[RMDB]
RNA sequence: GGGAACGACUCGAGUAGAGUCGAAAAUUCUUUCUCUUUCGUCGUCAUCCUUGGCUAGCCUCUGGAGUUCCUCUUCUUCCUCUUGGCUGAGGCGCUUUCCUCCUCCGGCCAGCUGCUUCUUCUUGUUAAACAGUGUCGUUCGCGACACUGAAAAGAAACAACAACAACAAC
Reactivity to DMS in 0.01 (KOAc 150mM, MgCl2 10mM, bicine 150mM(pH8.5), 24C), signal-to-noise 4, nucleotides 027 to 129: u060u010c050u000u000u000c050u010c080u000u000u000c000g060u030c020g030u010c000a020u020c060c010u020u040g000g000c000u030a090g030c070c010u040c030u000g050g000a140g030u050u020c070c040u030c060u000u000c070u020u020c000c000u000c040u040u000g020g000c080u040g010a120g040g020c300g010c040u030u010u010c050c030u000c030c010u020c000c000g030g050c030c010a090g000c060u030g000c010u000u000c000u040u020c050u000u000g040u030u030a090a050a130
Reactivity to 2A3 in 0.01 (KOAc 150mM, MgCl2 10mM, bicine 150mM(pH8.5), 24C), signal-to-noise 6, nucleotides 027 to 129: u050u020c000u020u070u010c020u000c000u020u050u030c040g020u010c010g020u020c040a070u040c040c010u030u040g050g000c030u040a020g020c000c010u060c040u050g030g000a050g030u020u040c020c010u030c010u030u010c000u040u010c010c010u040c010u060u050g060g000c050u020g020a030g040g010c020g020c080u040u030u030c000c020u010c000c000u010c010c000g010g030c000c010a020g000c010u090g020c000u020u030c000u050u010c010u030u070g090u060u170a110a090a020